[RMDB]
RNA sequence: GGGAACGACUCGAGUAGAGUCGAAAAUUCAAAUAACUAUCGAUAACCCUUGGGUUCUGCCCAUCUUGAAUCGCUAAAACACCGUCCAUGAUCAGACGACGGUUGAGGGUUUCCUGAUCACGACGCACACUAGUGCAGGAUUCGUCCUGCACUAGUGAAAAGAAACAACAACAACAAC
Reactivity to 2A3 in 0.01 (KOAc 150mM, MgCl2 10mM, bicine 150mM(pH8.5), 24C), signal-to-noise 2, nucleotides 027 to 126: u030u000c030a010a000a150u190a130a050c070u090a070u200c020g040a040u030a080a060c010c000c000u010u020g050g010g030u060u050c060u170g060c000c020c000a020u030c010u030u030g050a060a020u040c030g010c300u140a050a020a020a020c080a020c020c010g020u020c010c010a080u140g080a130u160c020a070g090a220c070g010a000c000g070g020u010u020g010a030g000g040g000u000u030u000c000c020u000g010a030u040c020a020c140g130a010c060g010c050a020
Reactivity to DMS in 0.01 (KOAc 150mM, MgCl2 10mM, bicine 150mM(pH8.5), 24C), signal-to-noise 3, nucleotides 027 to 126: u010u000c080a070a080a130u010a100a060c160u010a080u000c030g010a070u010a090a210c100c070c010u010u010g020g010g010u000u020c180u000g020c010c000c020a090u000c070u010u000g000a100a040u000c060g000c080u000a020a050a070a140c200a030c000c010g020u000c000c110a130u000g000a080u010c110a160g010a130c260g030a010c030g020g010u000u000g000a070g000g000g010u000u010u010c060c020u000g000a050u010c060a030c200g000a050c110g010c140a180